[RMDB]
An RNA of 207 nucleotides, treated with 2A3 and read out base by base. Values cover nucleotides 27 to 156.
RNA sequence: GGGAACGACUCGAGUAGAGUCGAAAACAAGUUCGUGCUUGCGACUUACACGUAGGACGAGGGGUGGGCGAAAGUUGCCAUGAGACCGUAACUUUCGUAGUCAUUGAUAAAGGGGCAGGUCUCGCUCAAAACCUCCCGUGGUUCGCCACGGGAGGAAUCAUGCAAUGACGUUCGCGUCAUUGCAUGAAAAAGAAACAACAACAACAAC
Reactivity to 2A3 in 0.01 (KOAc 150mM, MgCl2 10mM, bicine 150mM(pH8.5), 24C), signal-to-noise 1, nucleotides 027 to 156: c000a000a000g070u090u060c010g060u070g170c020u070u160g000c040g030a050c050u070u110a020c160a010c030g040u000a060g020g010a000c090g030a190g000g030g000g100u230g010g000g010c000g000a010a010a000g010u000u000g020c080c060a150u100g010a000g030a000c010c010g090u060a000a000c000u010u010u000c010g000u000a010g060u020c090a090u040u270g010a040u120a120a060a020g000g000g000g000c040a000g000g000u000c000u020c000g000c100u100c010a110a190a020a020c000c000u050c000c000c000g000u010g000g090u030u020c110g060c040c000a010c000g000g020g000a000g000g000a000a000